[RMDB]
RNA sequence: GGGAACGACUCGAGUAGAGUCGAAAAAGGCAGCACCAUGGGGAAAACAAUGUCCACAUCAUUGGACUCUAACUUCACGGUGGCAUGCUCUCGUCCAAAUACCGGGGGCAUAACACUGAGGCUCCCGGUCCCAUGCCACUGGAAAAAGGGCUGGUACAUAUGCGUUAUUGUUCGCAAUAACGCAUAUAAAAGAAACAACAACAACAAC
Reactivity to DMS in 0.01 (KOAc 150mM, MgCl2 10mM, bicine 150mM(pH8.5), 24C), signal-to-noise 2, nucleotides 027 to 156: a080g010g060c010a050g020c030a130c000c030a090u020g000g040g020g020a060a090a100a120c060a080a080u010g000u020c020c050a100c140a110u000c130a130u000u020g000g000a040c000u000c100u000a040a150c030u000u010c050a120c030g010g050u020g010g010c020a040u000g030c070u010c050u010c080g010u010c070c050a110a070a100u000a040c030c000g000g010g000g000g000c040a040u010a050a110c110a160c110u010g000a120g010g040c010u000c000c000c000g000g000u000c000c020c040a090u000g000c030c010a090c070u010g030g010a000a010a040a090a020g000g000g040c000u000g000g040u000a100c180
Reactivity to 2A3 in 0.01 (KOAc 150mM, MgCl2 10mM, bicine 150mM(pH8.5), 24C), signal-to-noise 3, nucleotides 027 to 156: a000g050g010c010a010g010c020a080c070c020a040u080g000g020g030g020a020a110a030a070c120a130a140u210g000u000c000c040a050c020a190u180c040a040u100u090g020g010a020c020u030c030u070a100a120c040u040u040c010a010c050g020g030u020g000g030c020a080u020g010c010u030c010u030c110g130u070c030c040a070a090a000u130a060c000c000g000g000g000g000g010c020a020u110a190a050c110a030c140u150g080a100g170g020c000u000c010c000c010g000g000u010c000c000c000a070u100g000c000c000a100c060u050g040g020a030a050a000a040a040g050g010g030c000u000g000g040u050a050c060

An RNA of 207 nucleotides, treated with DMS and 2A3 and read out base by base.
Values cover nucleotides 27 to 156.
Conditions: 150 mM KOAc, 10 mM MgCl2 and 150 mM bicine (pH 8.5), 24 C.
The DMS profile rests on 3,825 reads.
For 2A3, 1,974 sequencing reads were counted.